[RMDB]
RNA sequence: GGGAACGACUCGAGUAGAGUCGAAAAGAUAUGGAUCGUGAUAGGGAGAAGAGUCGGAAACGACCUUCAUCGAUCUAUACGAUCCUAAGUCAAAAGGGUCAAUACAUGUUCGCAUGUAUUGACCCAAGCUGUGAAAGGGGUUCGCCCCUUUCACAGCAAAAGAAACAACAACAACAAC
Reactivity to DMS in 0.01 (KOAc 150mM, MgCl2 10mM, bicine 150mM(pH8.5), 24C), signal-to-noise 1, nucleotides 027 to 126: g000a050u000a300u020g000g000a030u000c000g010u010g010a060u000a000g010g020g010a040g020a020a000g000a180g000u000c000g000g000a120a090a150c000g020a020c000c000u000u000c010a090u010c120g010a080u010c000u000a010u010a020c010g010a000u000c010c000u000a000a110g020u000c030a080a120a130a170g000g000g010u000c000a010a000u000a000c000a000u000g020u010u000c170g030c000a010u000g000u000a000u000u000g020a000c000c000c000a000a000
Conditions: 150 mM KOAc, 10 mM MgCl2 and 150 mM bicine (pH 8.5), 24 C. This 177-nucleotide RNA was probed chemically with DMS.